Source: RMDB library M2RFPK, as collected in RNAgym. Chemical mapping of a 207-nucleotide RNA with DMS and 2A3. For DMS the reverse transcriptase was MarathonRT. The RNA was probed in 150 mM KOAc, 10 mM MgCl2 and 150 mM bicine (pH 8.5) at 24 C. For 2A3 the reverse transcriptase was SuperScript II with manganese.
RNA sequence: GGGAACGACUCGAGUAGAGUCGAAAAGUGUGCUAUACUAGUAAGGUUGAAUGAAUCAACCCUUGGUGCUUAGCUUCUUUCACCAAGCAUAUUACACGCGGAUAACCGCCAAAGGAGAUAAGAUGAACUGCCCGACGAUUCUUCGGAAUCGUCGGAAUCAGUUUAUAUGGUUCGCCAUAUAAACUGAAAAAGAAACAACAACAACAAC
Reactivity to DMS in 0.01 (KOAc 150mM, MgCl2 10mM, bicine 150mM(pH8.5), 24C), signal-to-noise 4, nucleotides 027 to 156: g020u010g020u000g020c030u010a100u010a090c080u000a160g020u000a070a110g000g020u000u000g010a060a190u010g010a200a250u000c010a040a030c010c010c030u000u000g010g020u010g020c070u000u010a050g010c040u000u000c020u000u000u000c030a050c020c010a030a070g000c050a110u000a060u000u000a060c040a100c060g020c010g020g020a220u000a070a110c010c020g010c060c050a040a070a110g020g010a110g010a110u000a080a110g000a130u000g000a060a090c060u000g000c100c000c000g010a010c010g000a040u000u000c000u000u000c300g050g020a020a010u010c010g010u010c000g010g000a000a020
Reactivity to 2A3 in 0.01 (KOAc 150mM, MgCl2 10mM, bicine 150mM(pH8.5), 24C), signal-to-noise 9, nucleotides 027 to 156: g050u040g020u020g030c030u070a040u040a260c080u090a090g150u130a110a090g010g010u020u020g030a100a170u140g090a070a160u080c010a010a010c000c000c000u010u010g000g000u010g000c050u050u060a050g040c000u060u040c000u010u060u020c000a000c010c000a010a010g010c000a020u030a040u130u130a030c050a010c030g010c010g010g020a040u070a240a160c010c010g010c040c050a070a030a010g050g020a040g020a040u110a120a060g080a100u160g060a090a060c050u110g030c010c010c000g000a000c000g000a000u000u000c010u030u060c180g030g010a000a000u000c000g000u000c000g000g000a000a000